Source information:
Structure probing data (DMS and 2A3) for a 207-nucleotide construct.

RNA sequence: GGGAACGACUCGAGUAGAGUCGAAAACGACAAGGGUGUAAAGAUCGCUCUUUUACUCGGCAUGAUACCACCGUUAUCGUGUCAACAGAGUAGUUGCAAAUGACAACAAUGCUCAGGGUUAUGCUCUAAAAGUUCGUACCCUUCGGGGUACGAACAAGACGUAAAGUCAGUUCGCUGACUUUACGUCAAAAGAAACAACAACAACAAC
Reactivity to DMS in 0.01 (KOAc 150mM, MgCl2 10mM, bicine 150mM(pH8.5), 24C), signal-to-noise 2, nucleotides 027 to 156: c080g010a070c090a050a060g030g030g030u000g050u000a050a060a070g020a130u020c130g010c180u010c010u000u000u000u000a030c070u010c000g020g000c000a020u020g010a030u000a050c040c060a300c090c040g010u000u000a020u000c000g050u000g040u000c020a130a070c160a130g010a050g010u010a060g000u000u000g000c000a050a090a280u000g020a100c000a020a040c020a020a100u000g010c010u020c030a120g000g010g040u000u000a090u000g010c020u000c020u000a070a050a090a160g000u010u000c000g010u000a000c000c000c000u010u020c260g040g040g000g010u000a000c000g010a000a000c000a010a030
Reactivity to 2A3 in 0.01 (KOAc 150mM, MgCl2 10mM, bicine 150mM(pH8.5), 24C), signal-to-noise 4, nucleotides 027 to 156: c050g090a010c060a060a030g030g060g030u110g050u180a160a180a040g110a120u170c040g010c030u050c000u010u080u030u050a050c050u020c020g010g000c010a000u010g000a000u000a020c010c150a080c090c110g050u080u000a000u010c000g010u000g000u000c010a040a040c050a100g010a010g030u080a020g000u010u010g000c030a070a200a300u160g040a090c000a030a000c010a030a120u070g000c010u010c080a040g010g000g000u050u040a060u130g040c040u020c010u110a070a060a000a020g000u000u000c000g000u000a000c000c000c000u000u010c080g020g000g010g000u010a000c000g000a000a000c000a000a010